Notes:
This 177-nucleotide RNA was probed chemically with DMS and 2A3. The DMS profile rests on 1,907 reads.
RNA sequence: GGGAACGACUCGAGUAGAGUCGAAAAACUUUUUGUGCGGCUGCAAUGGAAAAUAGUUUUCGUGUCUGCCGUAGGUGCAAAGUGGCCAUAGAUGCGGAGUUCGGCCACAAAUACCGCUCCGUACAGCACUGGUACGCAGUUUCGACUGCGUACCAGUAAAAGAAACAACAACAACAAC
Reactivity to DMS in 0.01 (KOAc 150mM, MgCl2 10mM, bicine 150mM(pH8.5), 24C), signal-to-noise 1, nucleotides 027 to 126: a120c050u000u010u040u000u010g000u000g010c000g010g000c020u000g020c020a030a050u020g000g000a010a000a030a060u010a230g030u090u020u000u000c020g000u000g000u070c120u000g000c000c000g010u010a030g000g010u000g000c130a010a010a130g010u000g000g000c020c050a130u010a100g040a150u030g010c000g010g000a000g000u060u030c120g000g040c070c060a020c100a050a060a050u040a300c130c060g000c000u000c010c000g000u020a060c190a160g000c070
Reactivity to 2A3 in 0.01 (KOAc 150mM, MgCl2 10mM, bicine 150mM(pH8.5), 24C), signal-to-noise 3, nucleotides 027 to 126: a010c050u110u040u020u110u210g090u050g030c010g040g000c000u000g000c020a060a300u170g070g100a010a030a040a050u280a100g220u030u070u000u010c040g000u040g100u060c150u030g000c010c010g000u000a050g160g010u110g120c070a020a020a020g010u070g080g000c070c000a090u160a070g190a120u020g000c000g060g080a010g030u060u180c000g020g000c000c010a210c090a060a000a010u300a040c000c000g010c000u000c000c020g000u010a010c040a010g060c050
About this RNA
The RNA was probed in 150 mM KOAc, 10 mM MgCl2 and 150 mM bicine (pH 8.5) at 24 C. Reactivities are rounded to 0.1 and cut off at 0 and 3. Source: RMDB library OK1LIB, as collected in RNAgym.